The data come from the RNA Mapping Database (RMDB), library M2PK50. This 177-nucleotide RNA was probed chemically with 2A3 and DMS. 2A3 adducts were read by reverse transcription with SuperScript II with manganese. For 2A3, 8,850 sequencing reads were counted. For DMS, 3,672 sequencing reads were counted.
RNA sequence: GGGAACGACUCGAGUAGAGUCGAAAAGACCAAUCGUUCGCGAUUGGUCAAAAGGUGGAUGCUACGCUACCGAAGUAGCUAAAGUGCAGCUACAAAGCACAAAAACUUGGUUGUUCGCAACCAAGAAGUGUCUUUUUAUGUUCGCAUAAAAAGACACAAAAGAAACAACAACAACAAC
Reactivity to 2A3 in 0.01 (KOAc 150mM, MgCl2 10mM, bicine 150mM(pH8.5), 24C), signal-to-noise 5, nucleotides 027 to 126: g000a000c000c000a000a000u000c000g020u050u050c250g010c000g100a010u000u000g000g000u000c000a010a020a000a010g050g020u030g010g030a060u080g060c070u070a020c110g010c030u020a040c010c040g080a180a020g040u050a000g000c010u030a090a040a040g080u050g050c020a010g000c000u020a050c050a100a130a020g040c060a020c010a070a100a020a010a020c010u010u000g000g000u010u000g010u050u060c210g030c090a000a000c000c020a000a000g020a030a020
Reactivity to DMS in 0.01 (KOAc 150mM, MgCl2 10mM, bicine 150mM(pH8.5), 24C), signal-to-noise 4, nucleotides 027 to 126: g000a010c000c000a000a020u000c000g020u000u020c250g020c010g020a010u000u000g000g010u000c000a000a000a080a140g000g020u000g000g000a090u000g020c090u010a050c080g010c040u000a100c020c060g010a110a130g030u010a000g010c000u000a060a050a160g010u000g000c030a080g030c040u010a080c100a060a080a060g010c080a040c070a090a060a090a080a150c010u000u000g000g000u010u000g010u000u010c200g020c000a010a010c000c000a000a000g000a040a050